Overview:
An RNA of 207 nucleotides, treated with 2A3 and DMS and read out base by base. Conditions: 150 mM KOAc, 10 mM MgCl2 and 150 mM bicine (pH 8.5), 24 C. The data come from the RNA Mapping Database (RMDB), library OK3TST. DMS adducts were read by reverse transcription with MarathonRT.
[RMDB]
RNA sequence: GGGAACGACUCGAGUAGAGUCGAAAAUCUUCAGUGCAAAUUGCGAGCGGCGCGAUGUUGGCAAUGUGCCUUCUGGCACGCAGCUUCUUCUCAACAUGCUUUUAUGUGGAAUGACAGCGCUUGCUGUGUAUCUGACACGGGCGGGUUGCGCAGUACAUAUUAACCACAUGUUCGCAUGUGGUUAAUAAAAAGAAACAACAACAACAAC
Reactivity to 2A3 in 0.01 (KOAc 150mM, MgCl2 10mM, bicine 150mM(pH8.5), 24C), signal-to-noise 5, nucleotides 027 to 156: u060c050u120u110c050a020g020u010g070c040a040a090a230u150u100g020c050g030a020g000c010g070g010c020g010c010g090a050u090g030u110u040g040g000c040a070a130u170g020u050g030c010c000u170u220c130u160g000g000c020a010c030g000c010a030g010c010u030u020c010u020u020c050u010c010a030a050c010a060u080g040c060u020u080u290u190a060u090g050u030g020g090a090a060u150g030a070c040a050g000c020g020c100u090u150g000c020u000g020u000g000u030a070u030c050u050g010a020c000a010c080g040g030g000c030g020g060g000u090u060g020c030g000c010a010g040u040a040c040a070
Reactivity to DMS in 0.01 (KOAc 150mM, MgCl2 10mM, bicine 150mM(pH8.5), 24C), signal-to-noise 3, nucleotides 027 to 156: u010c030u010u010c070a150g030u000g010c040a080a090a110u000u000g040c030g000a060g040c020g010g040c040g040c030g000a100u000g020u010u010g010g010c030a130a120u000g030u000g010c010c000u000u000c110u010g050g030c080a040c020g010c050a210g000c030u000u000c050u000u010c030u000c010a070a080c020a050u000g010c130u040u010u010u000a030u010g020u000g020g010a070a050u010g020a050c030a100g010c050g050c110u010u000g030c010u000g030u010g040u000a020u000c050u000g020a100c050a050c060g010g010g010c030g020g010g010u010u000g000c010g000c040a150g020u010a070c080a190